Structure probing data (2A3 and DMS) for a 177-nucleotide construct. High DMS reactivity at an A or C suggests that its Watson-Crick edge is free. The RNA was probed in 150 mM KOAc, 10 mM MgCl2 and 150 mM bicine (pH 8.5) at 24 C. DMS adducts were read by reverse transcription with MarathonRT.

RNA sequence: GGGAACGACUCGAGUAGAGUCGAAAACACGUCGCCGUCUACCGGCGGGUGAUUGCGGAGUUCAACGGUGGUACACCGUUUCCGCUCCAGCUGGCGACGCAGGUGGACGCUCCUCCCGGGUCGGGGCUAUGUGGUUUGGGUUCGCCCAAACCACAUAAAAAGAAACAACAACAACAAC
Reactivity to 2A3 in 0.01 (KOAc 150mM, MgCl2 10mM, bicine 150mM(pH8.5), 24C), signal-to-noise 1, nucleotides 027 to 126: c040a000c000g040u050c010g000c050c000g100u080c040u170a130c090c000g020g000c130g000g020g010u160g110a240u060u210g020c000g010g030a080g040u160u200c020a030a010c020g040g050u040g060g200u210a110c050a030c100c010g000u010u000u010c000c020g000c030u040c000c010a030g000c030u080g000g000c000g000a010c000g000c010a020g000g150u020g030g000a020c010g010c030u000c020c010u010c040c000c010g000g000g020u000c030g000g000g020g000c030
Reactivity to DMS in 0.01 (KOAc 150mM, MgCl2 10mM, bicine 150mM(pH8.5), 24C), signal-to-noise 1, nucleotides 027 to 126: c020a070c040g010u000c070g020c050c020g010u000c130u000a090c110c050g000g010c010g010g010g000u000g010a030u000u020g010c040g010g000a080g000u010u010c270a030a020c000g020g040u000g010g020u000a040c080a030c010c000g010u000u010u000c040c040g000c000u000c010c010a140g020c020u020g000g020c260g020a010c040g020c130a190g010g020u000g000g020a300c110g000c010u000c010c010u000c040c000c010g010g010g030u000c000g010g010g030g010c110